[RMDB]
RNA sequence: GGGAACGACUCGAGUAGAGUCGAAAAGAAAGAAGUCAUGCUUCGUAAAUAAAUGCCUGGAAGGCACCGCGCUCCCAUAGGGGAUAAGAAAAGGCGACUCAACGAAAGUCGCCUUUUUUGUGCCCAAGCAAGGGAGAUUGUUCGCAAUCUCCCUUGCAAAAGAAACAACAACAACAAC
Reactivity to DMS in 0.01 (KOAc 150mM, MgCl2 10mM, bicine 150mM(pH8.5), 24C), signal-to-noise 1, nucleotides 027 to 126: g000a200a140a020g000a020a020g030u010c240a130u070g000c020u000u040c000g020u000a060a020a100u080a010a020a090u020g000c050c010u000g010g030a020a120g040g000c000a090c050c060g000c040g000c000u000c000c000c000a170u000a110g000g050g040g000a010u020a070a020g000a020a000a000a090g000g020c000g000a020c000u000c050a150a140c280g040a160a090a000g000u000c000g030c000c020u000u000u020u000u000u030g000u000g000c020c000c000a040a100